[RMDB]
RNA sequence: GGGAACGACUCGAGUAGAGUCGAAAAGGUUUUGUUCAUGCAUGCUGCUGUGUCACCGAUGAUAGAGGUGAACCAUUUUACUCACAGGUUAAACCGCCAACCAAGAGACACAUGGUAAUUGGAGGAGUGCUUCGGUAGCGUUCGCGCUACCGAAGCAAAAAGAAACAACAACAACAAC
Reactivity to DMS in 0.01 (KOAc 150mM, MgCl2 10mM, bicine 150mM(pH8.5), 24C), signal-to-noise 1, nucleotides 027 to 126: g000g030u000u000u010u000g000u020u000c090a080u000g050c100a050u010g010c010u000g040c090u000g010u010g000u000c020a080c010c020g000a090u000g020a120u010a090g040a170g030g000u000g000a070a090c010c030a120u010u000u010u010a110c040u000c150a110c120a180g000g000u000u000a050a060a170c070c020g000c030c050a030a110c020c030a050a060g030a070g000a050c150a110c150a130u000g010g030u000a000a210u000u010g230g000a110g000g020a070g000